Structure probing data (2A3) for a 207-nucleotide construct. Source: RMDB library M2RFPK, as collected in RNAgym. The RNA was probed in 150 mM KOAc, 10 mM MgCl2 and 150 mM bicine (pH 8.5) at 24 C. For 2A3, 1,072 sequencing reads were counted.

[RMDB]
RNA sequence: GGGAACGACUCGAGUAGAGUCGAAAAACCUUAUUUUGAGAAGCUGAGGGAUUUGGCCCAUAGAAACUUCAGCAACCGACUUUAAAUAGCACGGUGCUAAUACCAACGAGCAACUCGAAUGAUAAGUAAAACGUUGACAAGUUCGCUUGUCAACGAAGAUCCAUAUGCACUUCGGUGCAUAUGGAUCAAAAGAAACAACAACAACAAC
Reactivity to 2A3 in 0.01 (KOAc 150mM, MgCl2 10mM, bicine 150mM(pH8.5), 24C), signal-to-noise 2, nucleotides 027 to 156: a000c050c010u090u100a170u020u050u080u110g050a040g010a070a040g020c030u020g010a040g000g050g020a100u060u040u140g080g030c020c000c000a040u090a090g110a030a120a000c040u090u080c090a000g000c010a000a030c000c010g030a020c030u180u120u100a120a230a220u160a180g010c030a010c050g040g000u040g030c000u030a040a040u050a080c010c020a010a080c060g080a040g060c060a060a100c000u010c030g030a030a010u100g160a040u050a070a000g040u060a040a120a030a040c020g000u000u000g000a000c000a000a000g000u020u050c090g040c080u000u010g000u010c000a000a000c000g000a010a000